[RMDB]
RNA sequence: GGGAACGACUCGAGUAGAGUCGAAAAUCUAUUAUGAAAUAGCACGUACGGAAUCAACGAAUACGACAGCAAAAGAGGGGCUUUCUUUGUGGGAUCCCUAUGCUCUCACAGUGAUCACGACCAGAGAACUAUGAGGGUGCUUCGGCACCCUCAUAGUAAAAGAAACAACAACAACAAC
Reactivity to DMS in 0.01 (KOAc 150mM, MgCl2 10mM, bicine 150mM(pH8.5), 24C), signal-to-noise 1, nucleotides 027 to 126: u000c030u000a110u060u070a000u060g050a090a050a080u000a060g000c080a080c060g000u000a040c000g030g000a010a160u010c070a090a100c140g000a150a170u000a030c070g050a000c130a050g000c070a000a120a020a210g030a030g000g000g000g000c050u000u030u040c000u000u000u050g010u000g000g000g000a030u000c000c000c050u060a010u000g000c150u000c110u000c000a090c120a020g000u000g000a150u000c010a030c030g000a100c080c110a250g000a200g000a000
Reactivity to 2A3 in 0.01 (KOAc 150mM, MgCl2 10mM, bicine 150mM(pH8.5), 24C), signal-to-noise 2, nucleotides 027 to 126: u000c020u000a130u110u030a060u220g170a110a100a000u050a120g000c020a000c080g000u090a020c080g050g080a070a070u050c030a130a150c050g060a010a040u020a130c000g140a050c100a050g000c030a000a000a000a170g090a190g050g040g000g000c040u000u130u090c020u110u130u070g160u180g020g000g120a060u080c090c000c000u030a000u030g000c050u070c010u000c000a050c050a060g010u010g040a000u000c070a010c040g060a010c000c020a050g020a000g020a100
This 177-nucleotide RNA was probed chemically with DMS and 2A3. Conditions: 150 mM KOAc, 10 mM MgCl2 and 150 mM bicine (pH 8.5), 24 C. The data come from the RNA Mapping Database (RMDB), library OK1LIB. For 2A3, 719 sequencing reads were counted.